RNA sequence: GGGAACGACUCGAGUAGAGUCGAAAAGUAUCCAUGUUCGCAUGGAUACGAAAUAUGCCCGCGUAUAUCCGGUUGGCUGGAUGCGCGCGUCUGGCUGGCCGGUGGUGCUAGUCUUCGGACUAGCAAAGAAAUCGCUCAAAUUCGUUUGAGCGAUUUCAAAAGAAACAACAACAACAAC
Reactivity to DMS in 0.01 (KOAc 150mM, MgCl2 10mM, bicine 150mM(pH8.5), 24C), signal-to-noise 1, nucleotides 027 to 126: g010u010a010u000c000c000a010u000g000u010u010c180g020c030a010u000g000g020a010u000a000c000g020a060a030a060u000a240u010g000c010c010c000g020c260g000u020a130u010a080u020c010c010g000g010u000u000g010g000c000u010g000g000a000u000g020c050g010c220g020c020g000u000c000u000g010g020c000u000g010g000c020c010g000g010u010g010g010u010g030c010u000a000g000u000c000u000u010c170g020g010a010c000u000a010g000c020a020a010a100